[RMDB]
RNA sequence: GGGAACGACUCGAGUAGAGUCGAAAAGAUAUGGACAAGAACUACAGAAUAAAGGCGUUGAAAAGGUUAUGCUUAUCGGAAACGAUAAGCAUAACCUUGGAGCCUGAAGUCUGCUUGUCCUAAGUCAUCUACAUGAAUCCUUCGGGAUUCAUGUAGAAAAAGAAACAACAACAACAAC
Reactivity to DMS in 0.01 (KOAc 150mM, MgCl2 10mM, bicine 150mM(pH8.5), 24C), signal-to-noise 1, nucleotides 027 to 126: g000a010u020a300u010g000g000a000c010a040a000g010a210a120c070u010a300c010a020g000a040a000u000a250a220a040g000g000c010g010u000u010g010a180a080a020a010g000g000u000u000a000u000g000c000u000u000a010u000c000g000g010a060a110a150c040g010a000u030a000a020g000c000a000u020a010a000c010c000u010u000g000g000a110g000c000c000u000g000a040a080g010u000c000u000g000c010u000u000g000u000c010c000u000a030a070g010u020c030a210

An RNA of 177 nucleotides, treated with DMS and read out base by base. DMS adducts were read by reverse transcription with MarathonRT.